[RMDB]
RNA sequence: GGGAACGACUCGAGUAGAGUCGAAAAGAUAUGGACGACCAAGGGAGCUGAGUAUCGGAAACGAUACGACAGCAUCGAUCUUGGUCCUAAGUCAAAACCUGCCGUAAGCUUCGGCUUACGGCAGGAAGACUCAAUUCAGGUUCGCCUGAAUUGAGUCAAAAGAAACAACAACAACAAC
Reactivity to DMS in 0.01 (KOAc 150mM, MgCl2 10mM, bicine 150mM(pH8.5), 24C), signal-to-noise 2, nucleotides 027 to 126: g000a040u010a060u010g000g000a120c140g000a030c070c000a010a000g000g000g010a010g040c000u000g020a300g020u000a000u010c000g010g000a050a030a070c000g010a000u000a000c000g000a090c070a000g010c000a230u000c170g010a040u030c000u000u000g000g000u000c010c010u000a050a200g010u000c040a090a050a110a160c010c000u000g000c020c020g000u000a030a000g030c000u000u020c230g030g000c000u000u000a010c000g000g000c000a000g000g000a010a040